[RMDB]
RNA sequence: GGGAACGACUCGAGUAGAGUCGAAAAGUGAUAAUAAUUGUUAUCUUAAUGCAGUUAUUAUGACACUUGAUUUAUUGAAGGACAUUAAAUUUGUUAUACCUGCUCUACAGCAUGCAUUUAUGAAACAUACCGCGCAAGUUCGCUUGCGCGAAAAGAAACAACAACAACAAC
Reactivity to 2A3 in 0.01 (KOAc 150mM, MgCl2 10mM, bicine 150mM(pH8.5), 24C), signal-to-noise 4, nucleotides 027 to 129: g000u000g010a000u000a030a000u010a000a000u000u000g030u010u100a140u110c170u070u200a120a060u290g010c000a000g010u010u010a020u000u000a010u010g050a020c000a000c000u000u050g020a070u070u030u150a120u040u060g070a150a050g090g010a010c020a030u070u090a040a090a100u040u040u100g130u030u050a100u020a130c000c010u000g030c020u000c020u020a050c050a040g020c020a000u050g020c020a040u020u130u130a130u160g090a000a000a030c050a010u090a060c030
Reactivity to DMS in 0.01 (KOAc 150mM, MgCl2 10mM, bicine 150mM(pH8.5), 24C), signal-to-noise 4, nucleotides 027 to 129: g020u010g020a070u000a050a000u010a000a000u010u040g020u000u030a100u030c260u040u070a160a060u060g010c020a030g060u060u010a020u010u020a020u020g010a130c020a030c160u040u000g010a120u030u060u030a050u030u050g040a040a010g040g000a070c040a000u030u010a080a040a130u080u000u040g020u030u010a000u000a000c050c040u000g000c060u020c000u100a040c140a030g010c030a060u000g010c040a010u000u000u000a000u110g030a110a110a090c070a050u000a090c000